The record gives the reactivity of an RNA of 177 nucleotides to 2A3 and DMS. The DMS profile rests on 2,705 reads. The reactions ran in a buffer of 150 mM KOAc, 10 mM MgCl2 and 150 mM bicine (pH 8.5), at 24 C. 2A3 adducts were read by reverse transcription with SuperScript II with manganese.

[RMDB]
RNA sequence: GGGAACGACUCGAGUAGAGUCGAAAAGAUAUGGAUGUCCAGAGGGAGAGCCCUUCGGAAACGAAGGAAGCUCGAGGAUCUCUGAACAUCCUAAGUCAAAAGCUUGGUCAGUUCGCUGACCAAGCAACUAAAGUGAAUUCUUCGGAAUUCACUUUAGAAAAGAAACAACAACAACAAC
Reactivity to 2A3 in 0.01 (KOAc 150mM, MgCl2 10mM, bicine 150mM(pH8.5), 24C), signal-to-noise 1, nucleotides 027 to 126: g010a010u090a010u160g010g010a000u020g000u000c040c000a010g050a010g000g080g040a210g010a010g050c000c010c020u030u000c000g020g000a040a020a030c000g000a010a000g050g010a140a140g000c010u010c000g010a010g020g080a100u010c010u020c030u000g010a020a000c000a010u000c020c010u010a010a000g000u000c000a200a200a040a050g010c010u020u020g020g010u000c000a020g030u040u240c300g050c130u000g000a020c000c010a000a000g000c000a000a000
Reactivity to DMS in 0.01 (KOAc 150mM, MgCl2 10mM, bicine 150mM(pH8.5), 24C), signal-to-noise 2, nucleotides 027 to 126: g010a060u000a300u010g000g000a020u000g000u010c020c000a020g000a020g040g020g020a100g010a030g020c020c000c010u000u000c000g030g010a030a090a100c010g020a030a000g010g000a210a180g020c000u000c000g000a160g020g000a110u010c010u010c000u000g010a030a010c010a020u000c000c000u000a000a060g000u000c020a150a090a150a180g000c000u000u000g000g000u000c020a000g000u000u020c280g020c000u000g000a010c000c000a000a000g010c000a010a050